[RMDB]
RNA sequence: GGGAACGACUCGAGUAGAGUCGAAAAGAAAGACGGGACUGUUGAGUGAAGUAGGUAGUUUCAUGUUGUUGGGCCUGGCUUUCUGAACACAACGACAUCAAACCACCUGAUUCAUGGCAGUUACUAAGAGCAGGACUAUGUUCGCAUAGUCCUGCUCAAAAGAAACAACAACAACAAC
Reactivity to 2A3 in 0.01 (KOAc 150mM, MgCl2 10mM, bicine 150mM(pH8.5), 24C), signal-to-noise 3, nucleotides 027 to 126: g130a030a030a010g090a020c120g000g010g020a000c030u050g050u080u040g080a160g050u000g000a000a000g030u100a000g040g020u000a000g010u000u000u020c010a010u000g000u000u000g030u010u000g010g020g030c070c140u060g080g060c070u090u250u080c080u110g080a120a010c050a000c010a020a000c000g010a000c000a020u010c040a000a000a000c000c000a000c000c000u000g000a030u000u000c000a000u030g010g000c020a000g000u000u010a210c000u060a020a050
Reactivity to DMS in 0.01 (KOAc 150mM, MgCl2 10mM, bicine 150mM(pH8.5), 24C), signal-to-noise 1, nucleotides 027 to 126: g000a110a060a020g040a070c120g000g000g000a030c000u000g010u000u070g010a200g000u000g000a000a000g000u000a000g040g040u000a010g000u000u000u000c300a040u000g020u000u000g000u000u000g000g000g000c100c010u000g000g010c260u000u050u010c090u010g000a040a180c030a110c010a040a000c000g010a040c090a000u050c060a010a000a020c000c030a010c000c000u000g000a010u000u000c000a070u070g000g010c060a010g000u010u000a060c110u020a180a120